[RMDB]
RNA sequence: GGGAACGACUCGAGUAGAGUCGAAAAGAUAUGGAUUUAUUGGGGUGCUGCGAAGAACACGGACCCUCGAUAGGUCGGAAACGACCUAUACGAGCCGUGGGAGCAGCACCCCAAUAAAUCCUAAGUCGAAUAUGAUGAUGUUCGCAUCAUCAUAUUCAAAAGAAACAACAACAACAAC
Reactivity to DMS in 0.01 (KOAc 150mM, MgCl2 10mM, bicine 150mM(pH8.5), 24C), signal-to-noise 3, nucleotides 027 to 126: g000a090u010a300u010g010g010a000u000u000u000a000u000u010g000g020g000g060u000g030c010u000g010c030g000a130a200g010a130a200c000a010c010g010g000a260c210c300c040u000c010g000a040u010a010g030g000u000c000g020g000a100a100a220c000g000a010c000c000u000a000u010a050c030g020a030g010c030c010g000u000g000g000g000a100g020c000a030g000c000a010c020c000c000c010a000a000u000a010a010a010u000c000c000u000a000a080g000u020c120

Chemical mapping of a 177-nucleotide RNA with DMS. For DMS, 2,994 sequencing reads were counted. The reactions ran in a buffer of 150 mM KOAc, 10 mM MgCl2 and 150 mM bicine (pH 8.5), at 24 C. It was measured as part of the RMDB library TTRINS. For DMS the reverse transcriptase was MarathonRT.